[RMDB]
RNA sequence: GGGAACGACUCGAGUAGAGUCGAAAAGCGGGCUCCAGUGCAUUUUAUUUGGGGGCCUUAACUGGAUAGAAUGCCACUGAAACCAUGAGUGUCGAGGCGGCGAGCUCGUAGAGCUUCAGAUGGCGGAGCGCCUGUGUGUAUUCGUGUGCGUAGGUGCAAAAGAAACAACAACAACAAC
Reactivity to DMS in 0.01 (KOAc 150mM, MgCl2 10mM, bicine 150mM(pH8.5), 24C), signal-to-noise 9, nucleotides 027 to 126: g010c110g000g000g010c030u000c040c010a060g010u020g010c090a040u010u030u020u020a040u010u010u020g010g010g000g000g010c070c050u000u010a030a090c020u000g000g000a110u010a030g010a050a050u010g010c060c030a070c010u010g010a100a070a080c040c030a100u020g010a090g010u010g010u010c040g000a110g010g010c030g000g000c050g000a110g000c010u000c020g020u020a080g010a080g020c040u010u010c050a070g000a090u020g010g010c040g000g000a130
Reactivity to 2A3 in 0.01 (KOAc 150mM, MgCl2 10mM, bicine 150mM(pH8.5), 24C), signal-to-noise 9, nucleotides 027 to 126: g070c040g010g010g000c010u010c020c010a040g040u050g080c040a070u030u040u100u120a140u070u150u080g060g000g000g040g020c000c010u010u020a030a030c020u020g030g010a010u020a090g080a070a040u110g030c050c010a020c010u010g020a040a020a020c020c010a070u100g030a010g050u180g090u100c030g020a040g030g040c020g010g020c010g010a000g000c000u000c010g060u060a060g010a020g050c000u040u030c020a040g030a140u060g040g000c050g010g030a040
Chemical mapping of a 177-nucleotide RNA with DMS and 2A3. Conditions: 150 mM KOAc, 10 mM MgCl2 and 150 mM bicine (pH 8.5), 24 C. It was measured as part of the RMDB library OK1LIB. For 2A3, 56,311 sequencing reads were counted. For 2A3 the reverse transcriptase was SuperScript II with manganese.